[RMDB]
RNA sequence: GGGAACGACUCGAGUAGAGUCGAAAAGAUAUGGACUGAGGGAGUGCCCGGUCGGAAACGACCGAGCGCACUUUGAUCUCAGGUCCUAAGUCAAAUCAGAAGUUCCCCUUCGGGGGAACUUCUGAAACCUAUGCCUCUAGUUCGCUAGAGGCAUAGGAAAAGAAACAACAACAACAAC
Reactivity to DMS in 0.01 (KOAc 150mM, MgCl2 10mM, bicine 150mM(pH8.5), 24C), signal-to-noise 2, nucleotides 027 to 126: g010a040u000a300u010g000g000a160c000u000g000a020g010g020g000a010g000u000g010c010c030c020g000g030u010c000g000g010a080a120a110c000g020a000c010c010g010a030g020c270g020c000a020c000u000u010u020g010a100u010c000u000c010a010g020g000u020c000c000u000a040a150g010u000c060a110a110a220u000c000a010g000a040a020g000u000u000c000c000c000c000u000u020c160g040g030g000g010g010a010a000c010u020u000c000u010g000a000a030a130
Reactivity to 2A3 in 0.01 (KOAc 150mM, MgCl2 10mM, bicine 150mM(pH8.5), 24C), signal-to-noise 1, nucleotides 027 to 126: g010a020u070a030u150g000g010a000c020u020g020a000g010g040g010a040g010u010g030c020c000c030g000g000u000c010g050g000a170a060a010c010g000a000c020c020g090a100g020c150g060c020a000c000u130u110u030g080a070u040c020u010c020a040g020g300u110c010c020u030a080a030g000u010c030a000a010a300u060c000a000g010a000a020g000u030u010c000c000c070c000u030u200c210g040g000g000g000g000a000a000c010u010u000c000u010g000a000a000a000
Description: An RNA of 177 nucleotides, treated with DMS and 2A3 and read out base by base. The 2A3 profile rests on 1,660 reads. For DMS the reverse transcriptase was MarathonRT.